[RMDB]
RNA sequence: GGGAACGACUCGAGUAGAGUCGAAAAAUAUGUUUUGCACUGUUUGUUGUGAUAAGAUUAAUAAUUCAUUGUGUUUCGGUUGUUGUAAUUUCUCUCGGAUACCUAUUGAGGGGGCCUAGGUAGCCGAAAAAUAUCAUAUCUUCGGAUAUGAUAUUUUAAAAGAAACAACAACAACAAC
Reactivity to DMS in 0.01 (KOAc 150mM, MgCl2 10mM, bicine 150mM(pH8.5), 24C), signal-to-noise 1, nucleotides 027 to 126: a100u000a080u000g000u000u010u010u010g020c040a070c040u010g010u000u000u000g010u000u010g010u010g010a140u000a060a100g000a090u010u000a090a070u010a070a100u000u000c040a080u000u010g010u000g010u000u000u000c040g020g000u000u010g000u010u000g000u000a070a210u010u000u000c020u000c070u000c000g010g020a030u000a020c020c000u000a020u000u010g000a120g030g000g000g050g010c300c150u010a000g000g010u010a010g020c000c000g020a000
Structure probing data (DMS) for a 177-nucleotide construct. The reactions ran in a buffer of 150 mM KOAc, 10 mM MgCl2 and 150 mM bicine (pH 8.5), at 24 C. The data come from the RNA Mapping Database (RMDB), library OK2TST. Values are in units of 0.01, from 0 to 300, in steps of 10.